The record gives the reactivity of an RNA of 177 nucleotides to 2A3 and DMS. Values cover nucleotides 27 to 126. 2A3 adducts were read by reverse transcription with SuperScript II with manganese. In probing experiments dimethyl sulfate is read out at A N1 and C N3, which are open when not base-paired. DMS adducts were read by reverse transcription with MarathonRT. Conditions: 150 mM KOAc, 10 mM MgCl2 and 150 mM bicine (pH 8.5), 24 C.
[RMDB]
RNA sequence: GGGAACGACUCGAGUAGAGUCGAAAACAGGACGUACAUCAUCAUACAUUACACCAUCAGAUAUUUGUAAUGUGACGAGAUGGUCAUAUCUGAUGGUGAUCAUCUCGUAGAUGGUGUACGUCCUCAGGCUUCUCGUACAUUUCGAUGUAUGAGGAGCAAAAGAAACAACAACAACAAC
Reactivity to 2A3 in 0.01 (KOAc 150mM, MgCl2 10mM, bicine 150mM(pH8.5), 24C), signal-to-noise 9, nucleotides 027 to 126: c060a000g000g000a000c000g000u000a000c000a000u000c000a000u000c000a020u020a110c000a000u010u020a010c010a020c050c050a100u170c070a070g100a170u140a090u200u170u100g040u030a030a030u030g010u020g030a000c010g000a000g010a050u020g020g000u000c000a000u060a070u100c110u160g150a160u170g120g000u000g000a000u000c000a000u000c010u010c020g010u020a040g000a000u000g000g000u000g000u000a000c000g000u000c000c000u000c000a000g000
Reactivity to DMS in 0.01 (KOAc 150mM, MgCl2 10mM, bicine 150mM(pH8.5), 24C), signal-to-noise 6, nucleotides 027 to 126: c110a030g000g000a010c000g000u000a000c000a000u000c000a010u000c000a210u050a020c010a010u000u000a010c000a070c300c120a090u020c160a080g020a130u030a070u010u020u010g020u000a020a020u000g010u000g010a020c020g000a010g010a000u000g000g000u000c000a000u000a080u020c050u010g000a050u020g010g010u010g010a000u000c010a000u000c010u000c010g010u000a080g010a000u000g000g000u000g000u000a000c000g000u000c010c010u000c060a050g010